RNA sequence: GGGAACGACUCGAGUAGAGUCGAAAAGGAACGUUGUUCGCAACGUUCCGUGCCGGAAACGGACAUGACGAUCGCGCGCAUGUCGGGAAACCGAAAACGCGAGCAUCAUGGUGUUCGCACCAUGAAAACCACCUGGAACUUUCGAGUUCCAGGUGGUAAAAGAAACAACAACAACAAC
Reactivity to DMS in 0.01 (KOAc 150mM, MgCl2 10mM, bicine 150mM(pH8.5), 24C), signal-to-noise 2, nucleotides 027 to 126: g030g000a000a010c000g060u000u000g020u010u010c240g030c010a040a010c010g030u010u000c010c000g010u000g020c000c060g050g000a030a070a110c050g020g000a040c050a040u000g000a140c080g010a070u010c070g000c030g030c090g000c040a100u010g000u000c000g040g000g000a010a090a140c130c050g020a060a010a110a040c050g010c000g040a060g030c300a190u010c000a020u010g000g020u000g000u000u000c200g020c060a060c000c020a010u010g010a040a030a070
Reactivity to 2A3 in 0.01 (KOAc 150mM, MgCl2 10mM, bicine 150mM(pH8.5), 24C), signal-to-noise 1, nucleotides 027 to 126: g000g020a000a000c020g000u020u000g030u070u050c210g000c200a000a000c000g010u020u000c000c000g000u010g000c000c000g100g020a150a130a030c100g060g030a010c010a020u040g040a100c030g020a040u040c020g000c010g000c000g000c030a020u030g050u040c000g020g020g030a110a070a000c110c060g050a020a070a030a000c020g060c000g010a010g030c070a100u030c000a000u030g000g000u040g050u000u050c140g030c070a010c020c000a010u020g000a050a010a000
The record gives the reactivity of an RNA of 177 nucleotides to DMS and 2A3. For DMS, 924 sequencing reads were counted. The reactions ran in a buffer of 150 mM KOAc, 10 mM MgCl2 and 150 mM bicine (pH 8.5), at 24 C. It was measured as part of the RMDB library M2PK50.